The record gives the reactivity of an RNA of 177 nucleotides to 2A3 and DMS.
Conditions: 150 mM KOAc, 10 mM MgCl2 and 150 mM bicine (pH 8.5), 24 C.
The DMS profile rests on 1,505 reads.
Reactivities are given for positions 27 through 126.

RNA sequence: GGGAACGACUCGAGUAGAGUCGAAAACUCACAAACGUCCGAGGUCUAUUUUGUAGGACGAGGCUUGCGCUCUCAUGUUGACGAACCCUGGGUGGACUGGCCAUCCUUAAUGGACAAUUGGAGAUCCGGAUUACCGUCAUUUCGAUGACGGUAAUCCAAAAGAAACAACAACAACAAC
Reactivity to 2A3 in 0.01 (KOAc 150mM, MgCl2 10mM, bicine 150mM(pH8.5), 24C), signal-to-noise 3, nucleotides 027 to 126: c000u010c010a110c070a020a110a020c090g100u000c000c000g010a020g060g010u000c040u060a190u060u140u120u150g200u160a040g010g010a010c000g000a020g000g000c010u030u030g020c010g000c030u000c000u010c020a080u120g040u100u110g090a090c090g070a030a070c030c020c010u010g000g000g070u070g010g050a100c040u050g030g000c020c000a030u040c020c000u040u100a050a050u100g000g000a000c000a090a170u070u080g090g000a050g020a050u040c040c070
Reactivity to DMS in 0.01 (KOAc 150mM, MgCl2 10mM, bicine 150mM(pH8.5), 24C), signal-to-noise 1, nucleotides 027 to 126: c060u000c000a230c210a070a050a010c100g000u000c000c010g000a100g030g000u080c090u000a050u030u000u050u000g040u020a020g050g000a060c000g020a300g020g010c010u000u040g000c270g000c000u000c000u040c010a050u000g000u000u000g000a110c070g020a030a070c050c070c030u000g000g000g000u000g030g020a100c120u020g000g000c020c010a050u030c090c000u000u020a070a150u000g030g000a050c110a030a100u000u000g010g000a070g000a110u000c050c170

It was measured as part of the RMDB library OK1LIB. Reactivities are rounded to 0.1 and cut off at 0 and 3.